[RMDB]
RNA sequence: GGGAACGACUCGAGUAGAGUCGAAAAAUGUAAUCUAACAAAGUAAUCGCUUAAUGGGCGUGCAUUGCCGUGCGGCAACUUUACACGGUUGCUACCGUGUUUACGGCUGUAUACUAAUCUUAAGCAAUGAUUUUGCGUAUAAAUGCCUUCAUCGCUAGACAAUAAGUCGAUUCGUCGACUUAUUGUCAAAAGAAACAACAACAACAAC
Reactivity to 2A3 in 0.01 (KOAc 150mM, MgCl2 10mM, bicine 150mM(pH8.5), 24C), signal-to-noise 6, nucleotides 027 to 156: a000u170g020u120a060a050u060c080u130a110a060c030a080a080a010g070u110a100a100u070c040g000c020u090u080a070a050u150g100g020g010c050g000u060g010c040a060u060u170g000c000c020g010u030g000c030g030g010c020a030a020c020u090u090u170a050c040a010c050g010g010u020u110g020c030u080a050c000c030g010u010g020u020u050u050a010c010g000g000c000u020g040u020a110u020a060c040u060a040a100u060c030u070u060a060a010g000c010a030a070u080g070a070u070u080u110u100g030c020g030u070a060u060a120a100a050u180g030c000c000u080u150c030a110u130c020g000c100u030a050
Reactivity to DMS in 0.01 (KOAc 150mM, MgCl2 10mM, bicine 150mM(pH8.5), 24C), signal-to-noise 3, nucleotides 027 to 156: a090u020g030u000a110a100u010c090u000a140a070c030a030a020a070g020u000a050a020u000c020g030c000u000u000a050a080u000g020g030g020c050g030u000g030c030a030u010u010g030c020c000g020u000g030c060g000g020c010a020a030c060u000u010u010a140c120a080c130g000g010u000u010g000c080u000a070c030c070g000u000g030u000u000u020a040c050g040g010c010u010g010u000a040u000a060c040u000a090a170u000c120u000u000a010a040g030c010a020a010u020g000a050u010u010u000u000g030c010g030u000a130u010a040a060a140u000g030c020c050u010u010c080a100u010c070g020c070u010a260
This 207-nucleotide RNA was probed chemically with 2A3 and DMS. The reactions ran in a buffer of 150 mM KOAc, 10 mM MgCl2 and 150 mM bicine (pH 8.5), at 24 C. High 2A3 reactivity points to a flexible backbone, as in loops and unpaired stretches. It was measured as part of the RMDB library OK3TST. For DMS, 7,056 sequencing reads were counted. The 2A3 profile rests on 4,325 reads.